[RMDB]
Structure probing data (2A3 and DMS) for a 177-nucleotide construct. The reactions ran in a buffer of 150 mM KOAc, 10 mM MgCl2 and 150 mM bicine (pH 8.5), at 24 C.
RNA sequence: GGGAACGACUCGAGUAGAGUCGAAAAAGCUAUGGUCUACGGACCAUAGCAAGUGGGAUUUAACAUAAUAGUGUGGAUUGAAUCACACACACAUUUCAACCCACACUAUGAUGUUAAAUCCCAUUAAAACAAGACCGUAUUUCGAUACGGUCUUGUUAAAAGAAACAACAACAACAAC
Reactivity to 2A3 in 0.01 (KOAc 150mM, MgCl2 10mM, bicine 150mM(pH8.5), 24C), signal-to-noise 5, nucleotides 027 to 126: a000g000c010u010a010u010g000g000u000c010u010a050c280g110g000a000c000c000a000u000a000g010c000a000a000g020u020g000g000g010a000u010u010u000a000a000c000a000u040a050a000u000a060g000u000g010u000g000g020a010u000u010g010a020a020u170c030a040c010a010c010a000c010a000c020a260u000u030u050c000a000a000c010c000c000a000c000a000c000u000a000u010g000a000u000g000u000u000a000a000a000u000c000c000c000a000u000u010a000a000
Reactivity to DMS in 0.01 (KOAc 150mM, MgCl2 10mM, bicine 150mM(pH8.5), 24C), signal-to-noise 4, nucleotides 027 to 126: a070g010c000u000a000u000g000g000u000c000u010a150c220g030g020a010c020c000a010u010a000g010c020a000a040g050u010g010g000g000a020u000u000u000a010a000c000a000u000a070a010u000a000g010u000g010u000g010g000a090u010u000g010a030a000u010c240a100c190a100c220a070c260a070c190a080u020u000u000c000a000a000c040c000c000a000c000a000c000u000a000u000g000a000u000g000u000u000a000a000a000u000c000c010c000a000u000u000a030a060